[RMDB]
RNA sequence: GGGAACGACUCGAGUAGAGUCGAAAAAUCCAGAAGGGCGGAGCAAGCCACUGGAAGCGAGUCUUGCAUGGGUCUUGGCGACAAGAUUUGUGAAGCGUAGACAGCGGGUACAAAAGCCGCGUUAUUGCUCUAAGACCUCCUUCGGGAGGUCUUAGAGAAAAGAAACAACAACAACAAC
Reactivity to DMS in 0.01 (KOAc 150mM, MgCl2 10mM, bicine 150mM(pH8.5), 24C), signal-to-noise 2, nucleotides 027 to 126: a050u000c000c040a150g020a110a140g090g010g000c010g010g000a050g040c190a120a050g000c020c020a020c000u000g000g030a220a260g010c040g030a200g040u040c010u020u010g020c040a020u050g000g030g000u000c020u000u000g000g000c300g000a210c000a000a000g030a030u000u000u000g010u020g000a090a070g020c040g000u000a050g010a130c030a090g000c000g000g000g030u000a020c100a100a120a170a160g000c010c020g000c000g020u000u040a030u010u000g000
Reactivity to 2A3 in 0.01 (KOAc 150mM, MgCl2 10mM, bicine 150mM(pH8.5), 24C), signal-to-noise 1, nucleotides 027 to 126: a000u000c000c000a000g040a070a170g160g010g000c000g080g030a020g060c040a070a000g010c020c010a080c000u040g000g030a000a060g080c090g000a020g040u010c000u080u070g050c000a000u070g000g000g000u030c030u020u040g010g000c040g010a040c020a010a030g000a000u020u000u020g000u000g000a130a000g010c040g110u000a020g000a000c000a000g010c060g000g000g060u250a050c100a060a110a040a000g080c000c000g030c000g120u140u090a070u020u250g000
Record summary:
Chemical mapping of a 177-nucleotide RNA with DMS and 2A3. The DMS profile rests on 1,959 reads. For DMS the reverse transcriptase was MarathonRT. Reactivities are rounded to 0.1 and cut off at 0 and 3. The 2A3 profile rests on 596 reads. The RNA was probed in 150 mM KOAc, 10 mM MgCl2 and 150 mM bicine (pH 8.5) at 24 C. The data come from the RNA Mapping Database (RMDB), library RFM100.